[RMDB]
Chemical mapping of a 207-nucleotide RNA with 2A3 and DMS. DMS adducts were read by reverse transcription with MarathonRT. Reactivities are rounded to 0.1 and cut off at 0 and 3. Values cover nucleotides 27 to 156. For 2A3 the reverse transcriptase was SuperScript II with manganese.
RNA sequence: GGGAACGACUCGAGUAGAGUCGAAAAAUAUCCACUGAUAGAGAUCUUCAUUCUGGCUCAGGGAGAGCAGAAGUCAUUAGCAUGCCUGACAUAUUACCACAUCUGAUUACAAGCUUGUUCAAGAGCAAUUCUUAGCACCUAUAACCCUUACUCAAAACGAUUCUAUCUUUUUCGAAAGAUAGAAUCGAAAAGAAACAACAACAACAAC
Reactivity to 2A3 in 0.01 (KOAc 150mM, MgCl2 10mM, bicine 150mM(pH8.5), 24C), signal-to-noise 6, nucleotides 027 to 156: a000u080a060u030c020c000a030c060u070g030a070u070a110g070a000g030a080u040c030u110u050c070a090u080u000c040u080g120g010c000u000c040a030g040g080g010a100g000a010g000c020a010g030a060a000g030u030c030a060u040u070a020g020c020a020u040g020c010c010u010g020a030c020a030u130a070u060u130a040c030c020a020c000a080u050c020u060g050a050u050u090a050c040a100a030g020c020u040u040g030u110u120c050a060a010g010a000g060c020a030a090u050u030c020u030u050a010g010c020a010c030c010u050a050u080a170a070c010c010c010u020u050a060c050u070c130a030a070a050a050
Reactivity to DMS in 0.01 (KOAc 150mM, MgCl2 10mM, bicine 150mM(pH8.5), 24C), signal-to-noise 3, nucleotides 027 to 156: a160u010a070u000c000c020a160c040u000g000a130u000a110g010a100g000a060u000c050u000u000c050a160u010u010c030u000g070g010c030u000c040a040g020g030g010a130g000a070g050c030a090g020a090a070g000u000c040a100u010u000a080g020c060a070u000g000c050c040u010g010a160c040a080u000a080u010u000a050c020c040a050c070a050u000c030u010g010a100u000u010a100c050a050a090g040c020u000u000g020u000u000c090a050a100g000a100g010c030a060a100u010u000c010u000u000a070g000c020a040c060c000u000a080u000a060a060c050c010c030u000u000a070c060u000c060a030a090a110a230